[RMDB]
RNA sequence: GGGAACGACUCGAGUAGAGUCGAAAACUCUACGUAGGAGAUAGAGAAUAUCUCCAGGUAGCGCGACAGCAUGCGUAUGCCGGAUGCCUUGAUGAACGGUUCGAAUAUUAAACACUUCCCCUCGGAUGCGACGACGCGCAGGCAUACUUCUGUGAACCACGUCCUAUAUCUUCGGAUAUAGGACGUGAAAAGAAACAACAACAACAAC
Reactivity to DMS in 0.01 (KOAc 150mM, MgCl2 10mM, bicine 150mM(pH8.5), 24C), signal-to-noise 2, nucleotides 027 to 156: c020u000c010u000a030c020g000u000a170g040g000a020g040a040u000a030g020a300g010a240a180u010a020u000c010u000c000c000a030g000g010u000a040g020c070g100c040g010a190c040a090g000c130a080u020g080c130g060u000a070u000g040c020c010g000g020a110u010g000c010c010u010u000g020a130u000g000a100a120c100g020g010u000u020c020g030a130a120u020a180u000u000a060a030a110c070a100c150u000u000c010c000c000c100u020c100g000g020a130u000g010c000g010a150c050g000a100c050g030c050g030c070a000g030g040c020a110u000a050c060u000u000c030u000g010u010g000a090a060c090
Reactivity to 2A3 in 0.01 (KOAc 150mM, MgCl2 10mM, bicine 150mM(pH8.5), 24C), signal-to-noise 2, nucleotides 027 to 156: c000u000c000u000a010c030g160u090a070g010g000a000g000a000u000a010g150a020g150a270a060u070a010u010c000u010c000c030a010g050g030u020a030g010c060g050c050g110a030c010a100g060c040a040u120g020c020g060u060a010u030g000c000c020g110g000a100u130g020c030c030u080u120g040a090u070g030a200a020c070g000g000u030u030c020g090a040a040u080a130u170u290a180a190a090c160a060c130u060u040c000c020c030c000u020c030g000g010a020u060g170c000g010a030c000g020a020c050g050c050g000c000a010g030g000c000a020u030a090c040u030u070c010u010g000u000g020a010a010c020